[RMDB]
Structure probing data (DMS and 2A3) for a 177-nucleotide construct. Reactivities are given for positions 27 through 126.
RNA sequence: GGGAACGACUCGAGUAGAGUCGAAAAGAACUGACCAGCAAAUGUUUACGACAAGAUUCGACAUUUGCAAAUUACGUAGCGAUCUUCCAGAAUCUUGUCGAAACGUUCCCAAUCGCUACGCCCUAAAAGAUUCACAUAUAUUCGUAUAUGUGAAUCUAAAAGAAACAACAACAACAAC
Reactivity to DMS in 0.01 (KOAc 150mM, MgCl2 10mM, bicine 150mM(pH8.5), 24C), signal-to-noise 8, nucleotides 027 to 126: g010a090a090c100u000g010a130c070c070a150g000c070a050a060a050u010g000u000u000u000a300c050g000a020c000a010a010g000a020u000u000c010g010a110c190a060u000u000u000g000c090a050a060a080u010u000a070c020g020u010a010g010c010g010a020u000c130u010u010c140c160a100g010a030a020u000c000u000u000g010u000c010g000a010a060a160c090g020u000u000c000c000c010a110a040u000c010g010c000u000a010c020g010c020c030c020u000a040a060a100
Reactivity to 2A3 in 0.01 (KOAc 150mM, MgCl2 10mM, bicine 150mM(pH8.5), 24C), signal-to-noise 7, nucleotides 027 to 126: g040a050a020c090u110g060a060c040c050a030g070c040a050a060a080u100g020u050u110u110a060c020g000a000c000a010a000g010a020u010u030c020g030a020c090a140u140u160u160g030c030a060a020a030u150u100a030c020g000u010a000g020c010g000a010u020c060u190u030c180c040a030g020a010a010u000c000u010u000g000u000c000g040a060a040a000c020g000u000u000c000c000c000a000a010u010c000g000c000u010a000c000g010c010c000c000u120a090a090a000
High 2A3 reactivity points to a flexible backbone, as in loops and unpaired stretches. DMS adducts were read by reverse transcription with MarathonRT. The RNA was probed in 150 mM KOAc, 10 mM MgCl2 and 150 mM bicine (pH 8.5) at 24 C.